[RMDB]
The record gives the reactivity of an RNA of 177 nucleotides to 2A3 and DMS. The 2A3 profile rests on 4,035 reads. 2A3 adducts were read by reverse transcription with SuperScript II with manganese. The reactions ran in a buffer of 150 mM KOAc, 10 mM MgCl2 and 150 mM bicine (pH 8.5), at 24 C. For DMS, 4,257 sequencing reads were counted.
RNA sequence: GGGAACGACUCGAGUAGAGUCGAAAAGCGAGUUGCACGGCAAGCCGGCCGCGAUCGUCACCAAGCUCGAGGGCGCGGCGCAGCUCGCGCCGGGCGUCGAGCACUGCGUCGAAGUCGGGCAGAUGCAGUGCAUCCUAUACUUCGGUAUAGGAUGCACAAAAGAAACAACAACAACAAC
Reactivity to 2A3 in 0.01 (KOAc 150mM, MgCl2 10mM, bicine 150mM(pH8.5), 24C), signal-to-noise 2, nucleotides 027 to 126: g050c030g010a030g100u110u060g070c050a040c060g050g000c110a080a050g070c020c030g040g000c000c030g020c010g030a090u160c050g150u130c010a020c080c070a060a030g020c000u010c010g040a030g110g240g000c150g000c000g080g010c020g000c000a020g090c080u170c110g000c000g000c000c000g090g110g000c010g060u020c000g000a000g000c000a000c010u010g020c020g010u030c010g040a060a020g050u060c020g010g040g000c020a020g020a120u050g050c050a010
Reactivity to DMS in 0.01 (KOAc 150mM, MgCl2 10mM, bicine 150mM(pH8.5), 24C), signal-to-noise 3, nucleotides 027 to 126: g000c060g000a080g010u000u010g000c020a060c050g000g010c040a090a140g000c030c010g030g010c000c250g000c030g000a030u010c060g010u010c030a070c060c170a110a100g000c000u000c010g010a030g010g030g040c010g010c020g000g010c000g020c020a120g020c210u010c160g000c010g000c000c010g000g000g030c010g040u010c000g010a010g000c000a040c100u000g000c030g010u010c010g000a080a070g020u000c010g010g000g010c010a100g020a150u000g010c030a090